[RMDB]
RNA sequence: GGGAACGACUCGAGUAGAGUCGAAAAGCAUGGGUCGAUCAUGGCCCCGGUCUCGAAGGUCUUCGAGCCCGUGUCCAGCACGACGAUGGCUGUAGGCAGGAUGGGGACAGCCUUCUGUUGCCCCGUAGCCCACCACCGUGUUCGCACGGUGGUGGGCAAAAGAAACAACAACAACAAC
Reactivity to 2A3 in 0.01 (KOAc 150mM, MgCl2 10mM, bicine 150mM(pH8.5), 24C), signal-to-noise 1, nucleotides 027 to 126: g180c110a090u110g000g010g280u040c010g030a120u020c050a200u030g000g050c030c000c000c020g000g030u070c010u000c000g040a070a090g050g200u160c180u000u000c020g000a000g000c000c000c000g000u000g070u080c000c000a030g000c120a000c060g080a010c000g000a070u120g010g000c000u000g000u080a020g030g060c030a030g010g010a140u150g080g000g000g000a000c000a000g000c040c000u070u300c020u040g020u000u060g130c000c000c010c000g000u000a030